[RMDB]
Background
This 177-nucleotide RNA was probed chemically with 2A3 and DMS. DMS adducts were read by reverse transcription with MarathonRT.
RNA sequence: GGGAACGACUCGAGUAGAGUCGAAAAGUUGAGGUCAGUCCACAUUUCCUUUGUGAAGAGCAAGGAAAUCUAAAUGUAGCUGUUGCUCUCCAUGAGAAACAAAGGUAGCAUGAUUCUGUAGGAAAGAGGACUGUCGUUAGUUCGCUAACGACAGUCCAAAAGAAACAACAACAACAAC
Reactivity to 2A3 in 0.01 (KOAc 150mM, MgCl2 10mM, bicine 150mM(pH8.5), 24C), signal-to-noise 1, nucleotides 027 to 126: g010u000u050g020a010g030g100u000c020a000g050u010c010c010a050c010a090u070u010u060c010c010u140u080u090g050u060g010a090a210g030a000g060c010a000a000g050g060a110a000a000u050c010u100a070a200a100u270g050u090a050g050c090u020g090u210u090g000c010u000c000u000c020c000a040u150g090a070g080a060a070a000c090a030a060a030g040g040u040a030g150c050a000u050g010a130u230u100c010u170g070u110a070g000g050a080a080a000g090a030
Reactivity to DMS in 0.01 (KOAc 150mM, MgCl2 10mM, bicine 150mM(pH8.5), 24C), signal-to-noise 1, nucleotides 027 to 126: g030u000u000g020a060g020g010u000c090a070g010u000c010c030a070c200a120u000u000u000c000c000u010u000u000g040u010g000a030a060g020a110g000c000a010a050g010g000a030a040a150u000c100u020a050a050a130u010g010u000a100g020c100u020g010u000u000g020c040u010c010u000c030c040a050u020g010a100g020a040a060a000c150a040a060a130g000g000u010a030g000c070a100u020g000a110u010u000c100u040g040u010a040g010g000a040a020a020g020a200
The data come from the RNA Mapping Database (RMDB), library OK2TST. The reactions ran in a buffer of 150 mM KOAc, 10 mM MgCl2 and 150 mM bicine (pH 8.5), at 24 C. For DMS, 873 sequencing reads were counted.